Overview: The record gives the reactivity of an RNA of 207 nucleotides to DMS and 2A3. The RNA was probed in 150 mM KOAc, 10 mM MgCl2 and 150 mM bicine (pH 8.5) at 24 C. The 2A3 profile rests on 790 reads.

[RMDB]
RNA sequence: GGGAACGACUCGAGUAGAGUCGAAAACUCGCUCAAACAUACAGAGUUGUUGUGCGAUAUGAAUCUCUCUGCAUUAGAAUGGUCGAAGAAUCAGCGGCAAUUCGAGACCAAAUUAGAAGCCGCAUUAACAGCUUUGGAACACGCCUUGCUGACGUGAAAAUCGCACUAAUUUCGAUUAGUGCGAUUUAAAAGAAACAACAACAACAAC
Reactivity to DMS in 0.01 (KOAc 150mM, MgCl2 10mM, bicine 150mM(pH8.5), 24C), signal-to-noise 2, nucleotides 027 to 156: c040u000c050g000c060u000c040a090a080a110c110a160u000a160c060a110g030a100g040u000u010g030u000u000g020u000g010c080g000a140u000a040u010g020a100a090u010c030u000c050u000c030u000g000c070a120u000u020a130g020a080a110u020g030g030u000c010g000a180a200g010a040a040u000c040a110g010c070g010g020c040a120a110u010u000c040g000a300g000a170c010c010a030a040a100u000u000a140g010a080a250g000c050c020g000c030a120u000u020a070a060c020a010g010c030u000u010u000g000g010a100a140c050a060c030g010c010c040u000u000g010c120u000g010a050c040g000u010g000a050
Reactivity to 2A3 in 0.01 (KOAc 150mM, MgCl2 10mM, bicine 150mM(pH8.5), 24C), signal-to-noise 2, nucleotides 027 to 156: c020u020c000g040c000u100c050a170a090a030c060a040u250a060c050a040g090a010g050u000u080g000u010u040g030u100g000c010g000a030u000a110u150g180a180a160u000c050u010c050u000c050u160g070c140a140u060u060a040g110a230a120u080g000g000u000c000g040a110a010g000a010a050u060c060a040g050c010g000g000c030a000a010u000u000c000g000a000g000a010c000c010a000a020a070u110u100a040g060a170a040g050c000c010g000c000a000u030u100a030a060c020a000g010c000u200u120u140g000g020a070a000c030a010c070g010c010c000u040u020g010c030u010g030a010c000g040u030g000a110